RNA sequence: GGGAACGACUCGAGUAGAGUCGAAAAAUGUAGGAGGAACUAAAAAGCUGACAUGCAGGAUGACAACUAUAGUUAGUAAUAGUGUAUUGUAUUCAGGAUUUUUGCUAAUUGAGUAGAUUAUAGCUGCGUCUAGGAUUUAGUUCGCUAAAUCCUAGACAAAAGAAACAACAACAACAAC
Reactivity to DMS in 0.01 (KOAc 150mM, MgCl2 10mM, bicine 150mM(pH8.5), 24C), signal-to-noise 3, nucleotides 027 to 126: a050u000g020u000a060g000g010a120g010g000a080a050c060u010a040a070a100a110a100g010c050u010g000a100c170a060u000g020c050a040g000g000a070u000g000a060c060a090a050c020u000a050u010a060g010u010u000a050g020u000a050a030u000a060g020u010g000u010a090u020u000g010u000a110u010u010c050a070g000g000a120u000u000u000u000u000g000c010u000a020a060u000u000g000a070g000u000a070g000a100u010u000a080u010a080g000c040u000g000c190
Reactivity to 2A3 in 0.01 (KOAc 150mM, MgCl2 10mM, bicine 150mM(pH8.5), 24C), signal-to-noise 2, nucleotides 027 to 126: a000u100g030u070a010g020g050a020g000g050a040a020c020u100a110a100a080a040a000g030c050u010g010a020c020a050u080g000c010a010g030g100a070u070g030a000c010a040a000c090u050a030u030a130g060u060u030a030g040u080a030a080u010a080g020u000g030u060a070u140u100g060u040a100u040u130c010a030g120g100a120u090u020u030u050u100g020c000u000a050a070u060u050g070a010g060u080a040g020a110u120u130a090u150a110g100c030u060g000c020
Description:
Chemical mapping of a 177-nucleotide RNA with DMS and 2A3. Conditions: 150 mM KOAc, 10 mM MgCl2 and 150 mM bicine (pH 8.5), 24 C.